Structure probing data (DMS and 2A3) for a 207-nucleotide construct. Values cover nucleotides 27 to 156. For DMS the reverse transcriptase was MarathonRT. 2A3 adducts were read by reverse transcription with SuperScript II with manganese. The reactions ran in a buffer of 150 mM KOAc, 10 mM MgCl2 and 150 mM bicine (pH 8.5), at 24 C. The 2A3 profile rests on 7,559 reads.

RNA sequence: GGGAACGACUCGAGUAGAGUCGAAAAGCGUACUACUCUUGAUCGAAGACGCUUGGAUUUACAGAGGAAUAUAUUCCCAAAUAGGAAUAUUAGUACUCUGUUGUCAGCGUUUAAUUGAUGGAGUAUCGCAAAACAAACCGUGUUCGCACGGUUUGAAUGAUAAAUAUUGUUUCGACAAUAUUUAUCAAAAAGAAACAACAACAACAAC
Reactivity to DMS in 0.01 (KOAc 150mM, MgCl2 10mM, bicine 150mM(pH8.5), 24C), signal-to-noise 3, nucleotides 027 to 156: g000c020g030u000a050c100u020a000c000u000c000u000u000g000a300u000c010g010a300a130g000a000c020g000c000u000u010g050g010a040u000u000u010a020c000a030g010a030g000g000a250a260u000a010u000a000u000u010c000c000c020a050a140a240u020a060g010g000a030a020u000a000u000u000a090g010u000a120c010u000c000u000g020u000u000g010u000c000a060g010c000g000u000u000u010a030a300u000u000g000a300u000g000g000a030g030u010a030u000c030g000c030a080a060a080a210c010a000a010a030c000c000g040u000g010u000u020c300g000c000a000c010g020g000u000u000u000g000a070a140
Reactivity to 2A3 in 0.01 (KOAc 150mM, MgCl2 10mM, bicine 150mM(pH8.5), 24C), signal-to-noise 7, nucleotides 027 to 156: g000c010g030u080a110c040u000a000c000u030c000u040u070g080a030u040c020g040a070a020g010a010c000g020c010u060u130g130g010a060u300u260u100a010c000a000g010a000g020g010a030a000u020a000u000a010u010u030c010c020c050a140a300a120u300a110g000g000a000a000u000a000u000u010a000g000u000a000c000u000c000u010g000u000u000g000u000c010a000g020c000g020u030u070u120a170a100u040u050g010a020u050g020g030a010g000u010a020u300c000g000c000a020a020a000a080c000a000a000a000c000c010g000u000g040u060u080c300g010c080a000c000g000g000u000u000u000g000a010a010